RNA sequence: GGGAACGACUCGAGUAGAGUCGAAAAGGAAAUCAAAAUUAGAGAAGUGAAGGCUGAGAUUAGAAAGGUAAUGAAGGUAGGAUAUUGUCACUGGUUUACGGUAACCACCACCACCAAAAUAAAAAAACAUUAAGGUACUGUUCGCAGUACCUUAAUGAAAAGAAACAACAACAACAAC
Reactivity to DMS in 0.01 (KOAc 150mM, MgCl2 10mM, bicine 150mM(pH8.5), 24C), signal-to-noise 4, nucleotides 027 to 126: g010g010a080a070a090u010c070a040a060a090a080u000u010a080g000a110g000a100a090g010u000g000a070a070g000g000c030u010g010a080g000a040u000u000a050g010a070a040a060g000g010u010a040a070u000g000a080a070g010g010u010a050g010g020a050u000a070u000u000g020u000c080a050c050u000g000g010u000u010u010a050c060g020g000u000a030a070c050c050a060c030c030a030c050c050a050c050c070a040a050a030a070u030a020a010a060a060a060a060a110
Reactivity to 2A3 in 0.01 (KOAc 150mM, MgCl2 10mM, bicine 150mM(pH8.5), 24C), signal-to-noise 3, nucleotides 027 to 126: g020g010a030a030a060u130c050a020a030a080a170u190u150a040g030a040g020a140a030g050u050g070a040a000g050g000c030u030g040a040g000a090u030u070a040g070a090a050a010g020g030u080a080a060u110g050a030a010g040g010u080a020g010g020a040u030a040u170u110g060u050c030a020c150u030g030g050u010u010u090a040c020g010g000u030a030a010c020c010a010c000c000a020c000c020a000c010c010a020a070a030a020u280a050a100a030a000a010a000a000
An RNA of 177 nucleotides, treated with DMS and 2A3 and read out base by base. Source: RMDB library M2PK90, as collected in RNAgym. The 2A3 profile rests on 2,515 reads. The RNA was probed in 150 mM KOAc, 10 mM MgCl2 and 150 mM bicine (pH 8.5) at 24 C.